Chemical mapping of a 170-nucleotide RNA with DMS and 2A3. For 2A3, 55,756 sequencing reads were counted. The RNA was probed in 150 mM KOAc, 10 mM MgCl2 and 150 mM bicine (pH 8.5) at 24 C. Reactivities are given for positions 27 through 129.
RNA sequence: GGGAACGACUCGAGUAGAGUCGAAAACUCGCUGGCGCCGGCUGGGCAACGAUCCGAGGGAACUAUUCCUCUCGAGAAUCGGCAAAUGGGGCCCCUCGCUCGUAUCUCCGAGAGGAGACGAGAAAGACACCCAAUCACUUCGGUGAUUGGAAAAGAAACAACAACAACAAC
Reactivity to DMS in 0.01 (KOAc 150mM, MgCl2 10mM, bicine 150mM(pH8.5), 24C), signal-to-noise 8, nucleotides 027 to 129: c040u020c020g010c030u000g000g000c060g060c070c020g000g000c020u050g040g070g020c100a100a060c010g000a000u030c040c030g020a050g010g010g030a040a110c220u060a190u060u000c060c000u060c000u000c020g070a130g020a100a050u010c030g000g040c080a030a000a050u050g020g010g010g020c000c020c020c040u000c040g000c000u000c000g000u070a140u020c020u000c020c000g030a140g000a130g030g000a040g010a030c000g010a010g020a060a050a090g000a070c180a070c120
Reactivity to 2A3 in 0.01 (KOAc 150mM, MgCl2 10mM, bicine 150mM(pH8.5), 24C), signal-to-noise 9, nucleotides 027 to 129: c010u020c030g010c030u020g020g000c090g080c060c000g020g000c010u080g030g100g010c040a080a050c020g020a010u010c010c000g000a010g020g010g010a050a040c040u090a220u160u090c020c020u110c010u000c020g150a200g030a140a090u030c000g010g010c030a020a050a110u120g000g000g010g000c000c000c000c000u010c010g030c000u010c000g040u090a150u010c000u000c000c010g030a040g000a030g090g000a000g010a000c010g000a010g020a050a030a000g060a010c050a060c020